[RMDB]
RNA sequence: GGGAACGACUCGAGUAGAGUCGAAAAGAUAUGGAACAUCCGAGGAACUACUCUGUAGGGUCGGAAACGACCUGAGGGAGCCGUUUGACGAUGUUCCUAAGUCAAAAGACUAGGUUCGCCUAGUCAAGAUGGUUAAUGUGUUCGCACAUUAACCAUCAAAAGAAACAACAACAACAAC
Reactivity to DMS in 0.01 (KOAc 150mM, MgCl2 10mM, bicine 150mM(pH8.5), 24C), signal-to-noise 4, nucleotides 027 to 126: g010a030u010a300u010g010g000a010a010c020a000u000c000c010g000a300g000g000a010a030c010u000a090c010u000c000u000g020u000a290g010g010g000u000c000g000g000a070a060a250c000g000a000c000c000u000g000a170g010g000g010a030g040c030c150g010u000u010u000g000a300c300g010a040u000g000u000u000c000c000u000a010a080g000u000c040a080a050a070a120g000a020c000u000a000g000g010u000u010c290g000c010c010u000a000g010u000c000a060a080
Reactivity to 2A3 in 0.01 (KOAc 150mM, MgCl2 10mM, bicine 150mM(pH8.5), 24C), signal-to-noise 2, nucleotides 027 to 126: g020a020u090a020u160g000g010a010a000c000a000u010c010c020g010a090g270g110a020a030c020u030a000c020u060c100u190g000u050a030g040g000g000u000c020g020g060a030a060a030c010g000a000c030c010u000g010a100g060g020g000a000g010c020c000g000u000u020u090g010a010c010g000a000u000g010u000u000c000c000u000a020a010g020u000c010a000a010a040a190g010a000c000u000a010g050g030u040u060c280g050c040c000u000a000g000u020c010a000a030
The record gives the reactivity of an RNA of 177 nucleotides to DMS and 2A3. 2A3 adducts were read by reverse transcription with SuperScript II with manganese. For 2A3, 6,922 sequencing reads were counted. DMS adducts were read by reverse transcription with MarathonRT. It was measured as part of the RMDB library TTRDEL.